[RMDB]
RNA sequence: GGGAACGACUCGAGUAGAGUCGAAAAGAAAGAAAGAAAGAAUUUCGAUCAACUCAUUCUGCUGGUUGUUAUGCUGACAAUUGAUGAUUAAGCAUCACAACCUCCUAGAAAGAGUAGACCGAUUCAAACCCAUAAGGUAGUUCGCUACCUUAUGGGUAAAAGAAACAACAACAACAAC
Reactivity to 2A3 in 0.01 (KOAc 150mM, MgCl2 10mM, bicine 150mM(pH8.5), 24C), signal-to-noise 9, nucleotides 027 to 126: g090a010a060a010g090a020a070a010g070a030a130a020g060a030a060u080u140u100c020g010a020u020c020a020a010c000u000c010a040u030u000c000u000g020c010u000g000g000u010u000g000u000u010a000u000g010c000u020g030a070c080a110a170u180u270g090a140u090g000a010u140u050a080a000g000c000a000u000c010a000c000a000a000c010c000u000c000c010u040a010g000a010a010a000g010a000g000u020a030g010a000c000c010g010a000u010u040c050a090a070
Reactivity to DMS in 0.01 (KOAc 150mM, MgCl2 10mM, bicine 150mM(pH8.5), 24C), signal-to-noise 5, nucleotides 027 to 126: g000a110a080a100g010a110a070a110g010a110a100a120g000a070a040u010u030u010c000g030a100u000c100a080a010c000u000c000a110u000u000c000u000g020c120u000g000g010u000u010g000u000u000a010u000g010c010u000g000a110c240a080a130u030u040g010a140u020g000a280u010u020a130a040g000c000a000u000c050a020c010a010a010c000c000u000c080c040u040a000g010a000a000a060g010a000g010u000a030g010a050c040c010g000a050u000u010c040a110a100